[RMDB]
RNA sequence: GGGAACGACUCGAGUAGAGUCGAAAAAUCGCUAUUAUAUAGCGUAUCGCAUACGCCGCUAUAUAGCGAUAGCGUAUCGCGCGGCGCGCUAUGCGCGCGCGGCGAUAUAUAUAUAUGCGCGCGCGCGCACCACCUUAGAUUUCGAUCUAAGGUGGUGAAAAGAAACAACAACAACAAC
Reactivity to DMS in 0.01 (KOAc 150mM, MgCl2 10mM, bicine 150mM(pH8.5), 24C), signal-to-noise 3, nucleotides 027 to 126: a060u000c020g010c020u010a060u000u000a100u020a210u000a030g000c010g020u000a050u000c050g000c010a300u000a040c000g010c040c000g010c020u000a130u010a070u010a050g010c030g000a100u000a080g000c050g010u000a020u010c210g030c090g000c240g000g080c300g090c090g100c130u000a030u000g030c060g090c000g050c020g020c000g010g000c010g000a030u000a030u000a060u000a090u000a060u000a050u030g000c000g010c050g000c020g010c020g010c140g010
Reactivity to 2A3 in 0.01 (KOAc 150mM, MgCl2 10mM, bicine 150mM(pH8.5), 24C), signal-to-noise 3, nucleotides 027 to 126: a010u050c020g000c050u020a060u300u070a190u260a010u090a300g010c000g020u020a060u090c040g000c020a010u010a070c030g010c050c010g000c020u040a040u070a080u240a300g050c020g020a040u070a040g000c010g000u050a000u090c100g010c030g000c060g300g000c040g000c000g000c120u070a050u180g060c010g040c000g060c010g030c020g070g000c010g010a000u020a000u000a000u010a000u030a000u020a030u130g110c060g000c000g000c000g020c000g000c000g000
An RNA of 177 nucleotides, treated with DMS and 2A3 and read out base by base.
DMS adducts were read by reverse transcription with MarathonRT.
High 2A3 reactivity points to a flexible backbone, as in loops and unpaired stretches.
The RNA was probed in 150 mM KOAc, 10 mM MgCl2 and 150 mM bicine (pH 8.5) at 24 C.